Chemical mapping of a 177-nucleotide RNA with 2A3 and DMS. Source: RMDB library OK2TRN, as collected in RNAgym. For DMS the reverse transcriptase was MarathonRT. The RNA was probed in 150 mM KOAc, 10 mM MgCl2 and 150 mM bicine (pH 8.5) at 24 C.

[RMDB]
RNA sequence: GGGAACGACUCGAGUAGAGUCGAAAAUUGGGCUCCAGACAUCCGGGCACUGACCCUGGCAGAGGAGAGGUGUCCGCCCUACCAGGGAGGGCUUUGCUGGAGCACCUGGGGAAGUCAUCGCUGGUCAAUUUAUGCGUACGUUCGCGUACGCAUAAAUAAAAGAAACAACAACAACAAC
Reactivity to 2A3 in 0.01 (KOAc 150mM, MgCl2 10mM, bicine 150mM(pH8.5), 24C), signal-to-noise 1, nucleotides 027 to 126: u070u030g040g050g010c000u010c000c010a050g050a160c020a040u080c080c050g000g000g020c020a020c040u080g040a060c020c000c010u020g180g190c160a090g030a060g300g020a090g010a010g070g010u030g060u020c000c010g020c000c000c000u020a050c030c010a030g040g070g030a000g070g010g000c030u110u220u040g020c000u000g000g020a020g030c030a080c000c010u040g000g000g000g030a060a000g090u070c020a040u040c070g000c070u010g040g000u110c040a060
Reactivity to DMS in 0.01 (KOAc 150mM, MgCl2 10mM, bicine 150mM(pH8.5), 24C), signal-to-noise 3, nucleotides 027 to 126: u010u010g020g010g020c010u000c000c010a020g020a090c070a050u010c270c090g050g020g010c010a020c010u000g000a300c140c000c010u000g020g030c200a150g030a080g020g000a010g000a300g000g000u000g000u000c000c010g000c010c000c010u000a090c040c030a010g000g010g010a100g000g000g010c110u000u000u000g030c010u000g000g000a030g020c010a020c020c000u000g000g010g020g000a150a090g000u000c060a060u000c030g010c030u000g000g000u020c150a120